Chemical mapping of a 177-nucleotide RNA with 2A3 and DMS. DMS adducts were read by reverse transcription with MarathonRT. It was measured as part of the RMDB library M2PK90. The RNA was probed in 150 mM KOAc, 10 mM MgCl2 and 150 mM bicine (pH 8.5) at 24 C.
[RMDB]
RNA sequence: GGGAACGACUCGAGUAGAGUCGAAAAUAUAUAUAGAUCGUUCUAUUAACGAACACGCGCGGGUCGUCGGUGGUCGGCGAGCCCACGGACGAACUUACUCGCGCGAACGAGAAAAAAUCGCCAGGAACUAUUCUGUGGUAUUCGUACCACAGAAUAGAAAAGAAACAACAACAACAAC
Reactivity to 2A3 in 0.01 (KOAc 150mM, MgCl2 10mM, bicine 150mM(pH8.5), 24C), signal-to-noise 1, nucleotides 027 to 126: u060a000u000a010u000a030u020a110g090a120u060c030g030u040u000c080u020a250u230u180a110a050c080g000a070a000c010a000c050g000c000g000c000g020g050g020u030c000g000u000c030g130g000u000g010g010u020c090g010g010c000g000a000g000c010c000c000a000c020g020g010a000c010g010a050a010c000u160u130a020c000u090c000g000c010g000c000g000a000a000c020g000a020g060a030a150a030a000a080a000u010c010g000c030c020a060g100g100a110a060
Reactivity to DMS in 0.01 (KOAc 150mM, MgCl2 10mM, bicine 150mM(pH8.5), 24C), signal-to-noise 2, nucleotides 027 to 126: u000a090u000a090u000a170u000a060g020a100u010c060g010u000u010c000u000a210u010u010a100a100c090g000a090a120c170a120c120g010c010g010c000g010g000g020u000c010g010u010c000g010g020u000g000g020u000c030g030g000c010g000a030g000c300c000c010a000c010g010g000a060c000g010a110a070c120u010u010a160c000u010c000g020c010g010c000g010a030a000c040g010a070g030a020a010a090a020a030a040u000c010g020c000c010a170g030g030a070a220